[RMDB]
RNA sequence: GGGAACGACUCGAGUAGAGUCGAAAAGAGUGUCUUUUUGGCAUUUUGGCGGAGAUUAGAGUAUACCUCAAUCUCGAGUAUACAAGUACUUGCUAGUUUUUCUAGCUUGUACCUUCGCCUAUUAUGAGGGUCUAUCCAUGUUCGCAUGGAUAGACCCAAAAGAAACAACAACAACAAC
Reactivity to 2A3 in 0.01 (KOAc 150mM, MgCl2 10mM, bicine 150mM(pH8.5), 24C), signal-to-noise 2, nucleotides 027 to 126: g060a000g020u000g080u010c010u000u100u050u020u300g040g070c000a050u020u020u000u090g000g000c000g000g010a010g000a020u040u280a110g060a030g120u000a000u020a020c070c000u040c120a170a270u040c180u050c180g010a000g000u020a000u000a010c090a000a020g000u000a010c000u000u040g010c010u000a000g020u220u020u090u070u140c000u000a000g000c000u010u010g000u000a010c000c000u000u010c010g010c020c000u000a030u020u050a060u040g040a130
Source information:
The data come from the RNA Mapping Database (RMDB), library OK1LIB. An RNA of 177 nucleotides, treated with 2A3 and read out base by base. Values cover nucleotides 27 to 126. The 2A3 profile rests on 685 reads.